[RMDB]
RNA sequence: GGGAACGACUCGAGUAGAGUCGAAAAGAUAUGGAGGAUCCAGUUUAUCGAUGAAACCUUUCGGAAACGAAAGGUGGAGAUAUACUGGAGUCCUCCUAAGUCAAAGGGGUGGUCUUCGGACCACCCCCCACUAGACUUUGUUCGCAAAGUCUAGUGGAAAAGAAACAACAACAACAAC
Reactivity to DMS in 0.01 (KOAc 150mM, MgCl2 10mM, bicine 150mM(pH8.5), 24C), signal-to-noise 3, nucleotides 027 to 126: g010a060u000a300u010g010g010a010g010g010a300u000c000c010a010g000u000u000u000a010u000c010g000a170u020g000a130a160a020c010c000u010u000u000c000g000g000a140a050a250c000g000a010a000a000g000g010u010g030g000a030g000a020u000a010u000a000c010u010g010g000a020g000u010c010c000u000c000c000u000a010a070g010u000c030a070a110a130g010g000g040g050u010g010g000u000c010u000u010c290g020g010a010c000c000a000c000c000c010c000
Reactivity to 2A3 in 0.01 (KOAc 150mM, MgCl2 10mM, bicine 150mM(pH8.5), 24C), signal-to-noise 2, nucleotides 027 to 126: g000a020u070a040u200g000g010a000g020g000a010u030c010c010a000g000u060u050u030a090u030c260g190a300u050g000a020a000a000c010c000u000u000u000c010g030g030a100a090a070c000g000a000a000a000g000g010u010g020g000a010g000a000u000a000u010a020c010u010g010g020a020g020u010c020c000u000c010c000u000a000a000g000u010c040a000a110a090g010g010g010g000u000g000g030u000c020u080u170c300g130g020a000c010c000a000c000c010c000c000
Description: This 177-nucleotide RNA was probed chemically with DMS and 2A3. As a SHAPE reagent, 2A3 marks flexible, mostly unpaired nucleotides at the ribose 2'-OH. For DMS the reverse transcriptase was MarathonRT. Values cover nucleotides 27 to 126.